[RMDB]
RNA sequence: GGGAACGACUCGAGUAGAGUCGAAAAGCGUACUACUAAAUGAUUAAGCGUUGAAAUGUAUGCUUUCUACUGCGUACGACUCCCCACCAUGUCCCAAAUAGGACAUGAGGUCGUACGCAGUAGAAAGCAUACAUGGAGCUUAGCCAUUUAGUAUCGCCGAUCUGUAAAAGUUCGCUUUUACAGAUCGAAAAGAAACAACAACAACAAC
Reactivity to DMS in 0.01 (KOAc 150mM, MgCl2 10mM, bicine 150mM(pH8.5), 24C), signal-to-noise 1, nucleotides 027 to 156: g000c030g020u000a070c080u000a080c010u000a050a020a040u000g010a050u000u000a000a030g000c010g010u000u010g010a130a200a020u000g000u000a010u000g020c000u000u010u000c010u000a000c010u030g000c010g020u000a010c000g020a030c020u000c300c110c070c080a300c160c010a020u000g020u000c000c000c000a100a180a260u020a060g000g020a010c000a020u000g020a180g010g000u000c010g010u000a040c000g010c000a000g020u000a010g000a010a020a000g020c010a020u000a000c000a000u000g000g000a230g010c000u000u000a000g000c030c020a010u010u000u000a010g010u000a020u010c000g030c080
Reactivity to 2A3 in 0.01 (KOAc 150mM, MgCl2 10mM, bicine 150mM(pH8.5), 24C), signal-to-noise 2, nucleotides 027 to 156: g000c000g010u000a030c010u000a000c000u000a010a000a000u000g010a010u020u000a020a010g010c010g130u110u020g050a020a020a010u000g000u010a000u000g010c010u000u010u010c000u000a010c010u000g000c000g010u000a000c000g010a010c020u060c050c030c000c000a010c020c000a010u010g000u000c040c000c010a190a300a120u300a130g000g000a000c000a000u020g020a030g000g010u030c030g000u020a000c020g000c030a000g020u000a000g000a000a000a010g000c010a000u000a000c000a000u000g000g000a000g020c000u000u000a000g000c000c000a000u000u010u020a000g000u000a010u100c000g000c010